[RMDB]
RNA sequence: GGGAACGACUCGAGUAGAGUCGAAAAACGGUGCGGAAGUUCGCGCUUCCGUGAAACGCGAAAAUCGGACGGUGGCUGCAAGUCGCAUCGCAAAACCGCGGCAAGUGGAGUUAGCGAGAGGAGUCUGAAACCAUCCAACACUUCGGUGUUGGAUGAACUAGGUUUAAUGGUUCGCCAUUAAACCUAGAAAAGAAACAACAACAACAAC
Reactivity to 2A3 in 0.01 (KOAc 150mM, MgCl2 10mM, bicine 150mM(pH8.5), 24C), signal-to-noise 5, nucleotides 027 to 156: a000c010g030g000u070g010c020g010g020a030a020g020u130u200c050g040c020g000c050u020u000c010c010g000u020g020a100a060a010c080g020c030g060a080a040a010a090u100c020g020g010a010c020g010g020u020g050g010c070u150g040c090a090a020g010u020c010g010c020a000u030c010g000c030a060a060a000a010c020c000g020c000g050g040c110a160a070g030u030g040g020a050g030u080u060a020g040c030g020a020g010a040g100g030a030g020u010c020u040g020a070a010a000c020c000a000u010c000c000a000a000c000a010c000u050u080c220g060g000u000g010u000u000g000g000a000u000g000a000a010
Reactivity to DMS in 0.01 (KOAc 150mM, MgCl2 10mM, bicine 150mM(pH8.5), 24C), signal-to-noise 3, nucleotides 027 to 156: a010c010g020g030u010g010c000g010g010a050a090g040u010u000c230g000c270g020c020u000u000c010c060g040u000g010a020a090a040c030g000c000g010a080a050a080a110u000c060g010g020a040c030g000g040u000g010g000c020u010g030c070a030a100g020u000c030g000c000a140u010c040g020c040a050a090a090a130c020c020g010c070g020g030c050a080a130g020u000g000g010a150g020u000u000a150g000c020g010a080g000a080g020g010a110g040u010c020u000g010a100a080a100c120c000a030u000c000c000a000a020c010a010c010u000u010c280g030g010u010g020u000u000g000g010a010u000g000a010a100

Chemical mapping of a 207-nucleotide RNA with 2A3 and DMS.
The RNA was probed in 150 mM KOAc, 10 mM MgCl2 and 150 mM bicine (pH 8.5) at 24 C.
For DMS the reverse transcriptase was MarathonRT.
It was measured as part of the RMDB library M2RFPK.